[RMDB]
RNA sequence: GGGAACGACUCGAGUAGAGUCGAAAAAUAUGAGGGCGGAAGGAGAGAGGUUUUGAUUAGACUAAUGCUUUGCUGCUAAUCAAACUUAUAGUAUUUUUAGAGCACUUUGAAGAGUUUAUAGAAUCUAUGAAAAAGAUGCAAUAUUCCUCAUCCUAAAUGAUAUUACCGUGUUCGCACGGUAAUAUCAAAAAGAAACAACAACAACAAC
Reactivity to DMS in 0.01 (KOAc 150mM, MgCl2 10mM, bicine 150mM(pH8.5), 24C), signal-to-noise 1, nucleotides 027 to 156: a070u000a040u010g010a040g020g010g040c070g000g010a070a080g020g000a130g000a180g000a150g000g020u000u010u000u010g000a080u000u010a000g010a130c020u010a100a080u010g010c100u020u000u010g020c070u000g020c000u000a020a020u020c000a010a070a050c070u000u000a050u010a110g010u010a050u000u000u000u000u000a090g010a120g040c000a010c090u010u000u000g020a110a100g030a180g020u000u000u000a170u000a120g010a050a070u010c040u000a070u020g000a130a080a080a080a050g000a060u010g020c040a100a100u000a100u000u000c030c010u000c010a020u000c020c010u020a050a060a230
Reactivity to 2A3 in 0.01 (KOAc 150mM, MgCl2 10mM, bicine 150mM(pH8.5), 24C), signal-to-noise 1, nucleotides 027 to 156: a000u160a060u030g030a000g070g030g040c040g000g020a040a020g090g000a090g000a000g070a020g030g030u000u060u060u030g020a040u020u010a050g050a100c090u050a070a060u170g010c000u160u100u110g000c050u030g000c000u000a010a010u050c010a020a020a000c010u150u200a050u100a110g020u040a070u000u050u020u000u070a010g000a000g040c010a020c090u130u060u040g010a100a040g000a000g040u070u210u040a070u060a040g070a070a070u000c050u010a040u070g020a010a020a020a020a020g000a050u010g010c020a050a000u020a090u080u010c010c020u000c000a050u030c020c010u100a160a110a090